Overview: This 177-nucleotide RNA was probed chemically with DMS and 2A3. Source: RMDB library OK2TST, as collected in RNAgym. For 2A3, 991 sequencing reads were counted. The RNA was probed in 150 mM KOAc, 10 mM MgCl2 and 150 mM bicine (pH 8.5) at 24 C. For 2A3 the reverse transcriptase was SuperScript II with manganese.

[RMDB]
RNA sequence: GGGAACGACUCGAGUAGAGUCGAAAACACUGUGUGGGUCAAGCCAUCAUUGACAGGAGACGACGAGAAGGACCUUGUAAUUCGCUGUCAUAUUUGUGGAGGCAUCCUGUCUGAUAGCGAAAAGGACGGAUGAUGUGGAGUUCGCUCCACAUCAUCCAAAAGAAACAACAACAACAAC
Reactivity to DMS in 0.01 (KOAc 150mM, MgCl2 10mM, bicine 150mM(pH8.5), 24C), signal-to-noise 1, nucleotides 027 to 126: c120a110c110u000g010u000g020u000g010g020g000u010c140a120a170g030c070c020a040u010c100a010u010u010g010a110c100a020g010g010a080g050a040c190g060a020c060g010a020g020a080a100g000g000a200c020c050u010u000g010u000a070a230u000u000c000g010c010u000g010u010c010a010u000a140u000u000u020g010u000g030g000a070g030g000c230a090u000c050c030u000g000u020c120u030g000a050u010a090g020c020g020a030a020a070a060g060g000a130c110
Reactivity to 2A3 in 0.01 (KOAc 150mM, MgCl2 10mM, bicine 150mM(pH8.5), 24C), signal-to-noise 1, nucleotides 027 to 126: c030a010c070u030g010u040g020u020g130g000g000u070c060a090a000g040c020c010a030u050c030a050u030u100g050a060c030a020g020g090a020g020a030c100g040a010c060g010a000g000a060a070g050g010a000c020c000u050u090g120u120a090a190u110u020c020g000c040u000g010u070c030a000u060a070u260u190u170g150u070g000g020a000g060g090c030a090u020c010c000u000g010u070c060u000g000a020u010a030g000c000g050a000a060a000a000g090g030a030c040